[RMDB]
RNA sequence: GGGAACGACUCGAGUAGAGUCGAAAAGGACACCCGAGUAGCAGCGGGCCCGUGAAAUCUGCUGUGAAUCUGUCGGGACCACCCGAUAAGCCUGAAUACUCCCUGGUGACCGAUAGCGGACUAGUACCCUCAACUUCGAAUUCGUUCGAAGUUGAGGAAAAGAAACAACAACAACAAC
Reactivity to 2A3 in 0.01 (KOAc 150mM, MgCl2 10mM, bicine 150mM(pH8.5), 24C), signal-to-noise 2, nucleotides 027 to 126: g040g000a020c030a050c030c000c030g000a020g010u070a020g030c020a010g000c060g060g010g000c000c030c000g090u150g110a090a090a030u040c020u030g000c000u010g010u010g010a000a090u060c110u140g060u000c020g010g000g040a150c000c000a100c020c010c000g020a050u050a080a030g040c000c030u020g100a050a000u040a120c030u030c000c050c050u070g020g000u050g020a030c010c010g020a030u080a050g070c050g010g030a050c000u020a040g090u080a100c020
Reactivity to DMS in 0.01 (KOAc 150mM, MgCl2 10mM, bicine 150mM(pH8.5), 24C), signal-to-noise 2, nucleotides 027 to 126: g000g000a090c100a080c000c040c120g010a080g050u000a280g030c030a010g000c010g020g030g010c070c000c070g020u010g010a020a020a150u060c000u040g000c000u000g020u000g010a050a090u020c030u010g120u000c030g000g000g000a040c070c220a130c000c000c020g000a100u030a090a060g070c040c000u010g000a180a080u000a160c070u020c000c010c000u000g000g040u000g010a110c000c010g000a080u040a040g050c030g010g000a040c070u000a120g000u000a160c130